[RMDB]
RNA sequence: GGGAACGACUCGAGUAGAGUCGAAAACGGCCCAGGACGCCGUCAUACGUCGGCGUUCUGGAUGUCUCGAAUCCACCGUAGCCGUUCAACAAUGUGGGGCCGGGAUUGUCCGCGUCGGUGCGUCGCACACUGGAUGACACUUCGGUGUCAUCCAGUGAAAAGAAACAACAACAACAAC
Reactivity to DMS in 0.01 (KOAc 150mM, MgCl2 10mM, bicine 150mM(pH8.5), 24C), signal-to-noise 2, nucleotides 027 to 126: c100g010g000c050c000c010a010g010g000a000c010g030c000c000g000u000c030a190u080a040c300g000u020c000g020g000c000g020u000u000c000u000g020g020a070u040g020u010c020u010c020g020a090a110u000c010c010a050c010c040g010u020a030g040c020c000g020u000u020c060a100a120c200a130a050u040g020u010g010g000g020g000c050c000g000g000g010a090u000u010g010u020c020c030g000c080g000u020c020g030g000u010g010c040g000u020c030g010c090a190
Reactivity to 2A3 in 0.01 (KOAc 150mM, MgCl2 10mM, bicine 150mM(pH8.5), 24C), signal-to-noise 6, nucleotides 027 to 126: c020g030g000c020c010c000a010g000g010a000c000g000c000c000g010u030c030a260u260a300c270g010u010c000g010g000c000g000u000u000c000u000g000g010a030u110g040u000c030u010c040g040a050a040u010c020c000a030c020c020g040u060a030g000c000c000g040u060u060c040a100a110c040a140a190u140g060u110g050g050g000g010c010c020g020g000g070a120u030u140g050u040c030c030g000c040g050u050c020g030g050u060g020c040g050u060c010g010c000a040